[RMDB]
RNA sequence: GGGAACGACUCGAGUAGAGUCGAAAAACUAAGAAAUACACUUACUCCUUCUUGCCUAAAGAAGACGGCGAUGUGUUGUUGGCUGAGUUUGACACUUAUGACCCUAUUUAUAAGAAUGGUGCCAUGUAUAACUUGCACUUCGGUGCAAGUAAAAGAAACAACAACAACAAC
Reactivity to DMS in 0.01 (KOAc 150mM, MgCl2 10mM, bicine 150mM(pH8.5), 24C), signal-to-noise 3, nucleotides 027 to 129: a030c170u010a010a010g020a100a120a060u040a050c080a040c000u040u030a070c090u030c000c000u010u010c040u000u030g050c120c080u060a060a020a060g020a000a000g010a100c200g010g060c150g040a090u040g030u030g010u170u000g000u010u000g000g000c160u040g000a080g010u010u060u000g010a100c120a000c000u030u040a000u030g020a070c020c020c030u010a100u010u000u010a000u080a100a050g040a070a020u000g050g000u020g010c050c000a060u020g010u000a060u030a000
Reactivity to 2A3 in 0.01 (KOAc 150mM, MgCl2 10mM, bicine 150mM(pH8.5), 24C), signal-to-noise 2, nucleotides 027 to 129: a000c070u100a100a000g170a060a100a090u300a110c040a000c020u050u250a000c020u090c030c000u000u010c000u020u020g260c010c000u050a000a030a000g010a050a000g110a020c040g070g060c000g060a070u050g010u050g070u000u010g060u010u000g000g000c020u030g030a000g130u030u090u180g070a000c000a000c000u000u100a030u060g030a010c000c000c000u050a120u040u210u000a300u060a050a050g070a140a070u050g000g130u050g000c000c000a050u040g010u000a020u000a000
The data come from the RNA Mapping Database (RMDB), library 15KLIB. The record gives the reactivity of an RNA of 170 nucleotides to DMS and 2A3. DMS adducts were read by reverse transcription with MarathonRT. 2A3 adducts were read by reverse transcription with SuperScript II with manganese. Values cover nucleotides 27 to 129. The reactions ran in a buffer of 150 mM KOAc, 10 mM MgCl2 and 150 mM bicine (pH 8.5), at 24 C.